This 177-nucleotide RNA was probed chemically with 2A3 and DMS. For DMS the reverse transcriptase was MarathonRT.

[RMDB]
RNA sequence: GGGAACGACUCGAGUAGAGUCGAAAACGCCAUUGAGUUCCACGAGAAGGGUGGACGAAAGCGACGGUCCAUCGCGCACCUUUAUGUACUGGGUGGCACAAGGCAAGCGGAGGAAACUCAGUGCCAGCUACCUGGCGUCAUUCGUGACGCCAGGUAGAAAAGAAACAACAACAACAAC
Reactivity to 2A3 in 0.01 (KOAc 150mM, MgCl2 10mM, bicine 150mM(pH8.5), 24C), signal-to-noise 4, nucleotides 027 to 126: c090g020c010c000a000u040u040g020a000g040u040u000c000c000a030c010g070a040g080a230a050g190g010g000u030g000g040a030c020g090a110a140a050g180c080g060a040c050g080g060u000c000c000a020u070c030g000c010g000c070a050c030c000u100u080u080a160u160g080u100a100c070u150g000g050g080u060g000g030c010a030c050a080a010g030g000c030a100a070g000c030g100g040a150g100g000a080a080a060c000u000c000a020g010u010g040c010c010a030g050
Reactivity to DMS in 0.01 (KOAc 150mM, MgCl2 10mM, bicine 150mM(pH8.5), 24C), signal-to-noise 2, nucleotides 027 to 126: c170g010c180c010a040u040u000g040a090g040u010u000c030c000a230c090g020a120g030a070a050g000g000g020u030g000g000a030c050g030a000a110a210g030c140g000a100c140g020g060u030c020c000a010u000c000g000c070g000c040a050c000c040u000u010u000a080u040g080u100a080c090u020g030g010g000u020g000g000c030a170c230a100a060g000g020c050a100a050g020c020g000g000a160g000g000a060a000a000c030u000c000a050g000u000g010c040c020a050g000
The reactions ran in a buffer of 150 mM KOAc, 10 mM MgCl2 and 150 mM bicine (pH 8.5), at 24 C. It was measured as part of the RMDB library OK1LIB.